[RMDB]
RNA sequence: GGGAACGACUCGAGUAGAGUCGAAAAGUCUGGGCAAAGUAGGCUGUUUUUAAUAGUACUAACUUAAUCCACUGAUGGCUAUAGGAAAGCAUUGUGUAAUCCCCGAACACCUCUGUGGUGUAUUGGACAGGAUAUUUAUGUUCGCAUAAAUAUCCUGAAAAGAAACAACAACAACAAC
Reactivity to 2A3 in 0.01 (KOAc 150mM, MgCl2 10mM, bicine 150mM(pH8.5), 24C), signal-to-noise 9, nucleotides 027 to 126: g010u000c020u020g000g000g030c050a030a010a040g020u010a020g030g000c010u010g080u010u040u040u060u180a120a060u040a020g040u040a270c010u030a190a070c010u020u060a020a040u030c010c000a030c060u060g050a080u070g060g000c020u040a030u070a160g110g050a070a060a030g000c020a050u040u070g030u000g020u080a040a090u030c010c000c000c000g020a040a000c000a000c010c010u060c120u210g180u220g040g000u010g010u020a250u010u090g020g010a020
Reactivity to DMS in 0.01 (KOAc 150mM, MgCl2 10mM, bicine 150mM(pH8.5), 24C), signal-to-noise 9, nucleotides 027 to 126: g000u010c050u000g010g010g010c160a080a050a060g010u000a030g010g010c010u000g010u000u010u030u010u040a040a050u010a030g010u010a100c060u000a060a070c030u010u000a110a110u010c020c020a060c110u020g010a050u010g000g010c030u000a100u010a100g020g000a090a060a090g010c050a060u010u010g010u000g010u010a070a120u000c020c010c010c050g020a060a040c030a010c010c000u010c270u020g020u020g010g030u000g010u000a050u020u010g000g010a300
Background
Structure probing data (2A3 and DMS) for a 177-nucleotide construct. Conditions: 150 mM KOAc, 10 mM MgCl2 and 150 mM bicine (pH 8.5), 24 C. DMS adducts were read by reverse transcription with MarathonRT.